[RMDB]
RNA sequence: GGGAACGACUCGAGUAGAGUCGAAAAGAUAUGGAAGAGGCUACCCACCGAACUACCUCCGACUUUCGGAAACGAAAGGGGAGGCGAGGCCUCUUCCUAAGUCAAAAGCUUAACUUCGGUUAAGCAACAUGCUGUGAUAGUUCGCUAUCACAGCAUGAAAAGAAACAACAACAACAAC
Reactivity to DMS in 0.01 (KOAc 150mM, MgCl2 10mM, bicine 150mM(pH8.5), 24C), signal-to-noise 2, nucleotides 027 to 126: g010a100u000a070u000g000g000a020a020g000a020g000g020c010u000a120c090c020c090a300c100c030g000a060a030c100u010a270c000c000u010c000c010g000a190c000u010u000u030c000g000g000a050a050a110c000g000a000a020a000g000g000g000g020a000g000g000c110g000a080g000g000c000c000u000c000u000u000c010c010u010a030a060g000u020c120a130a090a090a120g000c000u000u000a000a000c000u000u020c220g040g000u000u000a000a000g000c000a050a080
Reactivity to 2A3 in 0.01 (KOAc 150mM, MgCl2 10mM, bicine 150mM(pH8.5), 24C), signal-to-noise 2, nucleotides 027 to 126: g040a040u190a100u270g000g030a020a010g010a000g040g000c010u090a210c030c060c020a060c040c060g020a080a060c060u130a070c110c010u000c020c020g300a300c210u020u000u000c020g030g020a080a040a030c010g010a000a010a010g050g000g000g000a000g030g000c010g000a010g000g000c000c010u020c000u020u030c000c000u000a020a010g040u020c100a010a090a080a070g000c010u010u000a000a000c000u050u070c300g080g020u000u020a020a000g000c010a000a000

Conditions: 150 mM KOAc, 10 mM MgCl2 and 150 mM bicine (pH 8.5), 24 C.
Structure probing data (DMS and 2A3) for a 177-nucleotide construct.
Source: RMDB library TTRDEL, as collected in RNAgym.